Source information:
An RNA of 177 nucleotides, treated with 2A3 and DMS and read out base by base. The 2A3 profile rests on 5,757 reads. The reactions ran in a buffer of 150 mM KOAc, 10 mM MgCl2 and 150 mM bicine (pH 8.5), at 24 C. For 2A3 the reverse transcriptase was SuperScript II with manganese.
RNA sequence: GGGAACGACUCGAGUAGAGUCGAAAAGAUAUGGAGACAAUGAGCAACAGCUCACCCGCUCAUCGGAAACGAUGAUGGUGAGACAUGCUCCUAAACUCCUAAGUCAAAACUCUGCUUCGGCAGAGAACUGAUACAGUCUGUUCGCAGACUGUAUCAGAAAAGAAACAACAACAACAAC
Reactivity to 2A3 in 0.01 (KOAc 150mM, MgCl2 10mM, bicine 150mM(pH8.5), 24C), signal-to-noise 3, nucleotides 027 to 126: g030a010u100a020u190g010g030a000g040a040c150a130a140u120g000a000g010c000a010a140c010a180g030c020u000c000a000c030c010c000g010c010u000c000a000u010c000g000g070a110a050a040c020g000a000u000g000a030u240g000g000u000g000a000g030a000c010a020u010g010c000u030c000c000u260a300a220a040c020u030c000c020u000a130a010g060u050c040a010a030a030a230c000u000c000u000g030c000u050u080c280g090g000c000a000g000a010g010a020a050
Reactivity to DMS in 0.01 (KOAc 150mM, MgCl2 10mM, bicine 150mM(pH8.5), 24C), signal-to-noise 3, nucleotides 027 to 126: g000a030u000a300u010g010g000a020g010a050c130a100a230u010g000a010g010c000a030a100c240a090g000c000u000c000a000c000c010c010g000c010u010c010a000u000c010g000g000a130a100a200c000g000a000u000g030a010u000g000g000u000g000a010g000a010c050a130u000g000c000u010c010c140u010a050a110a090c000u010c000c000u000a020a170g020u010c020a080a080a080a120c000u000c000u010g000c000u000u020c130g030g010c000a010g010a010g010a050a100